[RMDB]
RNA sequence: GGGAACGACUCGAGUAGAGUCGAAAAUGGUGAUUUUAAAAUCAGGUGUGAAUGCAGUCAGGUUGGCUACUUUACCUGCGGCGAGUGUGCCGAGACGUUUCUCAACGCCAAUCGCACGCGCCGGAUAUACUGUGGAGCCAUUCGUGGCUCCACAGUAAAAAGAAACAACAACAACAAC
Reactivity to DMS in 0.01 (KOAc 150mM, MgCl2 10mM, bicine 150mM(pH8.5), 24C), signal-to-noise 1, nucleotides 027 to 126: u000g000g000u000g030a110u010u010u010u010a070a030a060a100u000c000a060g000g020u010g020u000g000a020a050u000g030c040a020g000u010c000a050g000g040u000u020g010g020c000u000a030c070u010u000u000a090c000c030u010g020c010g020g020c010g010a020g020u010g010u000g000c120c080g000a180g030a020c020g000u000u000u020c180u000c220a080a080c090g000c000c030a110a150u010c080g040c020a050c060g000c020g000c000c000g020g000a060u000a120